[RMDB]
RNA sequence: GGGAACGACUCGAGUAGAGUCGAAAAAAGAAGUGGAUACUGCUACUAUACCAUGCCUUAACUAACAAUCCCAUGAAAACGGCCACCGUAGGGGUACUCAUGCUUAGUGGGGCAGUCAAUGGUGCCGUGAUCCACCGCUAUUCGUAGCGGUGGAUCAAAAAGAAACAACAACAACAAC
Reactivity to 2A3 in 0.01 (KOAc 150mM, MgCl2 10mM, bicine 150mM(pH8.5), 24C), signal-to-noise 2, nucleotides 027 to 126: a010a000g140a050a000g070u040g010g000a000u000a050c000u020g020c020u010a140c020u110a070u010a070c000c000a030u130g140c010c010u110u110a160a130c050u050a000a000c020a090a090u050c010c000c000a040u170g030a000a080a000a010c010g010g060c170c080a080c040c030g110u060a070g000g020g010g070u040a090c000u030c090a020u130g060c110u130u040a000g010u070g000g030g020g000c030a020g020u070c040a010a070u060g040g000u000g000c000c000g020
Reactivity to DMS in 0.01 (KOAc 150mM, MgCl2 10mM, bicine 150mM(pH8.5), 24C), signal-to-noise 1, nucleotides 027 to 126: a100a050g000a060a160g010u000g010g000a060u020a000c050u000g000c020u010a050c060u000a030u010a070c050c050a010u040g030c030c010u040u020a050a120c030u000a110a090c100a060a090u000c000c040c000a230u070g000a010a030a080a130c000g010g000c140c020a000c000c010g000u040a040g030g000g000g000u000a010c030u000c070a060u000g000c220u050u030a060g020u010g000g000g000g020c000a030g010u000c030a050a040u020g020g030u000g000c000c070g010